[RMDB]
The data come from the RNA Mapping Database (RMDB), libraries RFM100 and RFMREP. The record gives the reactivity of an RNA of 177 nucleotides to DMS and 2A3.
RNA sequence: GGGAACGACUCGAGUAGAGUCGAAAAUAUAGUACAGCACUUUGAAAAUGAAUCAUCUGCUAGUUCAGUAUUUUCUAAUUACAAUCACUCCCUCUCAAGGCAGGUAAUUAAUUUAUUGAGCUUUAAAUCGGAGUUUUAAAUUCGUUUAAAACUCCGAAAAAGAAACAACAACAACAAC
Reactivity to DMS in 0.01 (KOAc 150mM, MgCl2 10mM, bicine 150mM(pH8.5), 24C), signal-to-noise 2, nucleotides 027 to 126: u010a050u010a130g010u010a070c000a040g030c030a010c090u000u000u020g000a090a020a100a180u000g010a120a120u010c030a030u000c050u000g000c030u010a090g030u010u000c010a150g020u010a020u000u000u000u000c070u020a030a040u000u020a040c040a080a050u020c100a160c060u010c040c020c010u000c090u000c080a040a040g000g000c060a110g000g000u000a040a060u000u010a040a070u030u000u000a020u020u000g000a080g000c000u010u000u000a040a060a040
Reactivity to 2A3 in 0.01 (KOAc 150mM, MgCl2 10mM, bicine 150mM(pH8.5), 24C), signal-to-noise 3, nucleotides 027 to 126: u110a010u040a040g090u060a050c010a030g020c030a030c080u090u090u130g030a060a090a110a160u200g060a100a100u060c000a000u010c010u020g020c010u010a030g010u030u040c030a020g000u000a030u030u040u020u000c060u050a050a040u050u070a020c060a060a060u070c010a040c070u020c030c010c000u030c010u030c070a060a010g040g000c010a000g070g000u000a000a030u050u030a010a040u030u050u050a050u030u040g020a030g010c000u040u040u120a020a090a040
The 2A3 profile rests on 1,874 reads. The reactions ran in a buffer of 150 mM KOAc, 10 mM MgCl2 and 150 mM bicine (pH 8.5), at 24 C.